[RMDB]
RNA sequence: GGGAACGACUCGAGUAGAGUCGAAAAAGGUACCAUGCUGGGAGUUUUCAUGUAUUAGGCCAUUAAUCUUUAUUACAAUCAUUAGUUAAAAAGUAUUAUCCCCGUUUUGUAUAUGAGAAAAUGAAGGACACGUAACAAAAUUCGUUUUGUUACGUGUAAAAGAAACAACAACAACAAC
Reactivity to DMS in 0.01 (KOAc 150mM, MgCl2 10mM, bicine 150mM(pH8.5), 24C), signal-to-noise 5, nucleotides 027 to 126: a080g000g010u010a090c040c050a070u000g010c050u000g010g010g010a110g000u010u010u000u000c030a060u010g020u000a050u010u000a090g010g010c050c120a070u010u000a050a060u000c010u000u000u000a130u030u010a060c020a070a130u010c050a070u000u000a120g000u000u010a030a030a050a060a060g000u010a040u000u010a100u000c040c040c020c060g020u000u000u000u010g010u000a050u010a060u010g010a060g000a050a030a050a070u000g020a140a110g010g010
Reactivity to 2A3 in 0.01 (KOAc 150mM, MgCl2 10mM, bicine 150mM(pH8.5), 24C), signal-to-noise 1, nucleotides 027 to 126: a000g040g010u020a010c020c030a010u090g020c020u040g010g040g030a030g010u080u030u050u000c010a000u060g060u030a080u090u060a090g010g000c000c040a010u040u030a060a040u040c020u040u110u100a300u080u040a070c000a020a080u050c030a080u090u140a070g060u050u070a000a090a000a100a000g080u040a050u120u080a060u070c000c020c000c000g000u150u070u000u000g040u010a090u010a050u130g010a010g050a090a080a030a010u170g030a050a040g130g000